[RMDB]
RNA sequence: GGGAACGACUCGAGUAGAGUCGAAAAUUUAAAGGCGUCCAAUGAUUAAGUGAUACCAAGUUUUUAUUCAUGACGCUCAAUGGCUAGAACAUUGAAGGGAGGCUGGUUUAGGGAGACGCGAGCACAAUCACAGGAGAGAGUUCGCUCUCUCCUGUGAAAAAGAAACAACAACAACAAC
Reactivity to DMS in 0.01 (KOAc 150mM, MgCl2 10mM, bicine 150mM(pH8.5), 24C), signal-to-noise 1, nucleotides 027 to 126: u040u010u000a090a020a230g000g020c000g000u000c010c170a080a080u000g010a030u000u000a010a060g040u010g000a060u000a150c250c150a090a080g050u000u000u000u000u010a040u020u000c060a030u010g000a080c030g000c040u000c080a000a080u000g020g000c080u010a070g000a080a050c060a030u000u020g010a120a080g010g000g000a020g020g000c080u010g020g000u000u000u010a100g000g010g030a060g010a060c100g030c110g000a060g020c090a070c150a060a120